[RMDB]
RNA sequence: GGGAACGACUCGAGUAGAGUCGAAAACCAGAUGACGGUCCUCCCAUGAGACCGCAACGAGAGCAUGUCGCAUCGAAUGGACUCGGGGAGUCGGCAGCUUGCCCCACGGAUGAGCGCCUAAUGCCGGAAGAGACGUGCAACUUCGGUUGCACGUCAACGUGAUUUAAGGAUUCGUCCUUAAAUCACGAAAAGAAACAACAACAACAAC
Reactivity to 2A3 in 0.01 (KOAc 150mM, MgCl2 10mM, bicine 150mM(pH8.5), 24C), signal-to-noise 6, nucleotides 027 to 156: c000c000a020g080a150u130g060a030c030g000g020u040c010c000u000c000c010c020a120u140g010a010g030a050c020c010g040c080a060a070c000g030a030g010a040g060c050a110u290g130u300c160g010c020a050u040c030g050a050a070u120g000g010a030c010u000c030g000g000g010g000a010g010u040c010g000g000c010a050g010c000u030u070g030c010c000c020c060a100c040g060g020a200u090g020a030g000c030g010c000c000u070a120a040u100g010c010c000g020g040a050a020g130a020g000a040c000g000u000g000c000a000a000c000u040u060c160g120g000u000u000g000c000a000c000g000u000c000a000a000
Reactivity to DMS in 0.01 (KOAc 150mM, MgCl2 10mM, bicine 150mM(pH8.5), 24C), signal-to-noise 3, nucleotides 027 to 156: c030c010a160g020a140u000g020a100c010g000g020u000c100c010u010c070c040c060a170u000g000a080g010a080c020c030g030c050a090a180c020g000a090g000a150g030c100a130u000g000u000c090g010c020a170u000c020g000a140a300u000g020g010a110c040u010c020g030g020g000g020a050g030u010c060g000g040c070a090g010c010u000u000g040c050c000c030c090a150c070g000g000a060u000g000a050g020c020g030c050c030u010a110a060u000g010c000c040g010g000a070a150g010a100g000a000c000g050u000g000c000a000a020c000u000u000c300g040g000u000u010g010c000a000c010g000u000c000a000a030